[RMDB]
RNA sequence: GGGAACGACUCGAGUAGAGUCGAAAAGGGCCCACCCCCUCAUAGCCGCAGGACUCUGGAUCAUGAAGGUGUUGAGGCCUCAAACUAGACAGGAAGUGGAGGGAUUCUGGAUGUUCCCUCGGCAAGACGUAAUCAGCUACUUCGGUAGCUGAUUACGAAAAGAAACAACAACAACAAC
Reactivity to 2A3 in 0.01 (KOAc 150mM, MgCl2 10mM, bicine 150mM(pH8.5), 24C), signal-to-noise 3, nucleotides 027 to 126: g020g010g050c000c000c000a030c000c010c000c000c000u040c010a130u080a050g040c020c010g050c050a020g000g030a070c010u010c010u090g020g060a050u070c000a030u080g090a150a060g010g010u050g050u100u160g080a040g000g000c000c010u100c030a070a080a010c010u040a030g110a080c050a090g140g130a180a060g080u070g070g040a020g030g010g000a000u150u000c050u060g160g020a050u180g020u040u030c010c000c000u010c000g030g030c060a110a010g100a040
Reactivity to DMS in 0.01 (KOAc 150mM, MgCl2 10mM, bicine 150mM(pH8.5), 24C), signal-to-noise 2, nucleotides 027 to 126: g000g040g000c000c000c030a140c050c060c030c010c030u000c040a120u010a150g030c020c040g000c170a180g010g000a170c090u010c010u030g000g000a070u000c110a050u010g000a030a100g000g020u000g000u020u030g000a120g020g020c000c010u000c200a070a140a060c020u030a020g000a070c070a090g000g000a110a050g000u000g000g000a160g010g010g020a010u020u000c030u020g000g000a140u020g020u010u030c040c000c010u000c030g060g040c090a090a070g000a180

Annotation: Chemical mapping of a 177-nucleotide RNA with 2A3 and DMS. The reactions ran in a buffer of 150 mM KOAc, 10 mM MgCl2 and 150 mM bicine (pH 8.5), at 24 C. DMS adducts were read by reverse transcription with MarathonRT. The DMS profile rests on 1,977 reads. DMS (dimethyl sulfate) methylates the pairing face of unpaired adenines and cytosines.